[RMDB]
RNA sequence: GGGAACGACUCGAGUAGAGUCGAAAAAAUGUUUGCUUUGGAGAAUGAUAUUUUCCCUUUCCUAUAUUUGACUUUUGUUCUAAAAGUUAUUUGGAGAGAAAAGGCAUGAUUGAGGUUGCGACUUUUUAAUACAUCGAUUGUUCGCAAUCGAUGUAUUAAAAGAAACAACAACAACAAC
Reactivity to 2A3 in 0.01 (KOAc 150mM, MgCl2 10mM, bicine 150mM(pH8.5), 24C), signal-to-noise 1, nucleotides 027 to 126: a010a000u090g040u040u010u020g080c090u110u010u130g000g000a070g040a010a010u280g110a060u070a130u000u080u000u090c000c000c000u000u000u000c050c000u150a070u030a030u070u040u000g000a000c000u100u000u000u130g130u230u300c230u130a000a030a030a030g000u010u000a000u040u090u040g040g000a010g000a000g030a000a000a170a000g000g000c060a000u070g070a190u100u090g010a010g080g030u010u010g000c000g000a040c000u090u070u000u000u000
Chemical mapping of a 177-nucleotide RNA with 2A3. Source: RMDB library RFM100, as collected in RNAgym. 2A3 adducts were read by reverse transcription with SuperScript II with manganese. The reactions ran in a buffer of 150 mM KOAc, 10 mM MgCl2 and 150 mM bicine (pH 8.5), at 24 C. Values cover nucleotides 27 to 126.